[RMDB]
RNA sequence: GGGAACGACUCGAGUAGAGUCGAAAAUUGUAAUGCGCCCUAACUACACAAUUAAGGGUUCCUUUCUGUGUGGUUCUUGUGGUAGUGUUGGUUACACCAAGGAGGGUAGUGUGAUCAAUUUCUGUUACUAGGUUUAAAGGUUCGCCUUUAAACCUAGAAAAGAAACAACAACAACAAC
Reactivity to 2A3 in 0.01 (KOAc 150mM, MgCl2 10mM, bicine 150mM(pH8.5), 24C), signal-to-noise 4, nucleotides 027 to 126: u040u010g010u050a040a010u060g030c010g020c020c000c000u000a020a010c010u020a010c010a000c010a040a280u090u060a020a030g100g120g080u250u300c010c000u020u000u030c030u010g000u000g010u020g010g020u070u010c040u080u080g040u080g050g000u020a080g020u060g080u110u080g060g010u020u020a010c020a020c010c010a030a010g060g030a020g010g060g010u070a180g010u060g020u010g020a010u090c000a010a010u050u070u020c030u030g060u050u020a070
Reactivity to DMS in 0.01 (KOAc 150mM, MgCl2 10mM, bicine 150mM(pH8.5), 24C), signal-to-noise 3, nucleotides 027 to 126: u020u000g010u000a150a040u000g000c040g000c020c000c010u000a110a040c020u000a010c010a010c010a020a090u000u000a030a030g000g010g030u000u000c010c010u000u000u000c080u000g030u010g010u000g010g000u000u010c090u010u000g000u000g010g020u000a040g030u000g030u000u010g010g010u000u000a040c020a040c040c050a040a040g010g010a090g000g000g010u000a050g030u000g000u000g010a100u000c030a030a040u000u010u000c030u000g000u000u010a160

The record gives the reactivity of an RNA of 177 nucleotides to 2A3 and DMS. High 2A3 reactivity points to a flexible backbone, as in loops and unpaired stretches. Values cover nucleotides 27 to 126. The 2A3 profile rests on 4,107 reads.